RNA sequence: GGGAACGACUCGAGUAGAGUCGAAAAUGUACAAUGGGGAGUACGGCAAUAUUCAGGAGUGGAGGACAAUUUUGUAUUCGAUGCGAGCGGCAGAGGCAAGCCGGGGUGACAGUGGCAGGCCAUUCACAAGUAGUCUAUUCUUCGGAAUAGACUACUUAAAAGAAACAACAACAACAAC
Reactivity to 2A3 in 0.01 (KOAc 150mM, MgCl2 10mM, bicine 150mM(pH8.5), 24C), signal-to-noise 2, nucleotides 027 to 126: u110g020u050a030c060a100a080u100g000g010g010g020a040g040u040a020c050g020g000c000a070a080u060a080u170u190c050a050g000g070a030g010u100g030g020a010g030g000a010c020a040a040u100u120u130u130g090u070a150u090u140c090g050a030u060g050c020g010a040g010c000g020g000c010a000g030a000g100g020c030a000a000g030c010c000g000g010g030g000u000g010a050c020a050g010u000g030g030c010a010g010g040c000c030a020u070u060c110a050c010
Reactivity to DMS in 0.01 (KOAc 150mM, MgCl2 10mM, bicine 150mM(pH8.5), 24C), signal-to-noise 5, nucleotides 027 to 126: u010g020u000a050c090a080a120u020g020g010g010g010a120g020u010a050c100g000g010c060a080a080u000a110u000u000c070a100g010g010a070g040u000g010g020a060g010g000a070c120a060a050u000u000u000u000g010u000a090u010u010c070g010a100u010g010c080g000a080g000c060g000g000c050a040g010a080g010g000c070a060a070g030c040c050g010g020g000g010u000g000a030c090a030g020u010g000g000c050a070g010g010c040c040a070u010u010c100a060c210